Conditions: 150 mM KOAc, 10 mM MgCl2 and 150 mM bicine (pH 8.5), 24 C. Structure probing data (2A3 and DMS) for a 207-nucleotide construct. Reactivities are rounded to 0.1 and cut off at 0 and 3. For 2A3 the reverse transcriptase was SuperScript II with manganese.
[RMDB]
RNA sequence: GGGAACGACUCGAGUAGAGUCGAAAAAGAUAGGUUAAGGUCCCCAAGUGUGGAUUAAGUGUAAUCCUCUGAAGGUGGUCUCGAGCCCUAGACAGCCGGGAGGUGAGCUUAGAAGCAGCUACCCUCUAAGAAAAGCGUAACAGCUUACCGGCCGAGGCAACUCUAGCUUGUUCGCAAGCUAGAGUUGAAAAGAAACAACAACAACAAC
Reactivity to 2A3 in 0.01 (KOAc 150mM, MgCl2 10mM, bicine 150mM(pH8.5), 24C), signal-to-noise 2, nucleotides 027 to 156: a000g060a060u140a020g000g020u100u020a070a050g020g010u020c000c020c050c000a030a040g050u060g010u060g170g030a040u040u080a080a120g080u090g100u270a020a000u000c000c010u050c060u030g100a260a100g000g040u180g020g030u050c050u040c080g050a040g020c000c000c000u010a010g010a040c040a000g000c020c000g010g020g010a020g060g100u130g080a010g000c000u010u110a030g030a220a040g070c050a010g010c010u080a140c000c010c000u020c020u050a010a020g040a020a110a000a000g000c000g040u080a050a020c020a080g000c000u000u010a030c000c030g000g000c020c010g010a050g000g130
Reactivity to DMS in 0.01 (KOAc 150mM, MgCl2 10mM, bicine 150mM(pH8.5), 24C), signal-to-noise 2, nucleotides 027 to 156: a130g000a060u000a000g020g030u000u000a080a070g000g010u010c020c010c000c010a130a190g000u000g010u000g000g010a040u000u000a020a180g070u010g020u010a030a050u000c000c010u000c010u000g000a170a080g000g000u010g000g010u010c000u000c030g020a170g010c070c000c030u000a090g000a130c080a100g010c010c000g010g010g000a010g010g020u000g010a090g010c010u000u000a090g060a170a150g020c190a070g000c040u000a060c050c000c000u000c020u000a090a120g000a060a070a010a060g010c020g010u000a080a090c110a190g000c010u000u000a070c020c030g030g030c000c060g040a120g010g000

The 2A3 profile rests on 995 reads. For DMS the reverse transcriptase was MarathonRT. The DMS profile rests on 2,769 reads.